[RMDB]
Description
An RNA of 177 nucleotides, treated with 2A3 and DMS and read out base by base. Conditions: 150 mM KOAc, 10 mM MgCl2 and 150 mM bicine (pH 8.5), 24 C. DMS adducts were read by reverse transcription with MarathonRT.
RNA sequence: GGGAACGACUCGAGUAGAGUCGAAAAGAUAUGGAUCCCUGGUGACUUCGAGGAUCUCGGAAACGAGGGAGAAGGCCACAUGGGAUCCUAAGUCAAACGGGACGUUAACUUCGGUUAACGUCCCGAACCCUUGAUGCAUGUUCGCAUGCAUCAAGGGAAAAGAAACAACAACAACAAC
Reactivity to 2A3 in 0.01 (KOAc 150mM, MgCl2 10mM, bicine 150mM(pH8.5), 24C), signal-to-noise 1, nucleotides 027 to 126: g000a010u090a040u140g000g000a010u030c020c020c020u100g300g000u040g070a050c000u000u000c010g090a300g040g000a020u000c000u050c020g000g010a100a050a060c000g000a000g000g000g010a010g010a010a030g060g040c200c010a030c000a060u080g000g000g000a000u000c000c000u020a020a030g040u010c020a110a100a090c020g000g000g030a000c020g010u030u000a000a000c000u080u190c300g000g000u010u020a000a000c000g000u010c010c000c000g000a000a010
Reactivity to DMS in 0.01 (KOAc 150mM, MgCl2 10mM, bicine 150mM(pH8.5), 24C), signal-to-noise 2, nucleotides 027 to 126: g000a030u010a300u000g000g000a000u000c000c000c000u000g000g040u000g010a300c000u000u000c040g000a130g030g010a030u010c000u000c000g020g000a110a090a150c010g000a020g000g000g000a050g000a010a010g020g000c060c000a010c030a150u000g000g000g030a000u000c000c000u000a010a050g000u000c020a050a090a240c000g010g000g010a000c030g010u000u000a000a000c000u000u000c300g000g020u000u000a000a000c010g010u000c010c000c000g000a000a060